[RMDB]
RNA sequence: GGGAACGACUCGAGUAGAGUCGAAAAGCACAAGAUUAAAAGAAACCAGAUGUUACUUCAAGGUUUGAAGUUUUAUGUAAGAUUUAGCCAACAUGGAAAAAGCCUCUACUAUGUUCAGUGUUACUUUCCGUAAGGUACACAAAGACGAAUAAAGGAAGAUUACUUUUAAUUUCGAUUAAAAGUAAUCAAAAGAAACAACAACAACAAC
Reactivity to DMS in 0.01 (KOAc 150mM, MgCl2 10mM, bicine 150mM(pH8.5), 24C), signal-to-noise 2, nucleotides 027 to 156: g010c060a110c040a080a130g000a180u000u000a100a090a140a170g020a110a100a080c030c020a090g020a150u000g000u000u000a060c040u000u000c000a050a150g020g000u010u000u000g010a040a080g010u000u000u000u000a040u010g020u010a070a090g010a110u000u000u000a070g030c050c050a060a070c080a090u010g000g000a080a060a140a090a200g030c050c030u000c040u010a070c020u000a100u000g010u000u000c030a300g000u000g020u000u010a060c020u000u000u010c070c240g010u000a070a070g030g000u000a020c020a040c040a030a090a090g010a060c040g020a050a090u010a060a040a050g000g000a080a130
Reactivity to 2A3 in 0.01 (KOAc 150mM, MgCl2 10mM, bicine 150mM(pH8.5), 24C), signal-to-noise 3, nucleotides 027 to 156: g020c000a010c020a050a060g070a120u110u230a100a080a040a060g120a080a020a010c040c050a050g030a110u080g050u130u090a060c040u050u070c030a040a090g090g030u070u070u060g040a030a000g010u060u030u040u130a070u100g030u030a080a010g010a100u060u110u120a020g000c020c040a030a020c020a120u050g000g020a030a040a090a030a010g000c020c000u030c010u040a060c030u030a040u110g030u040u080c030a030g020u000g000u050u080a030c020u030u020u000c010c020g030u060a040a020g010g010u000a010c020a000c000a030a130a000g040a010c050g030a050a050u190a140a120a050g110g010a020a080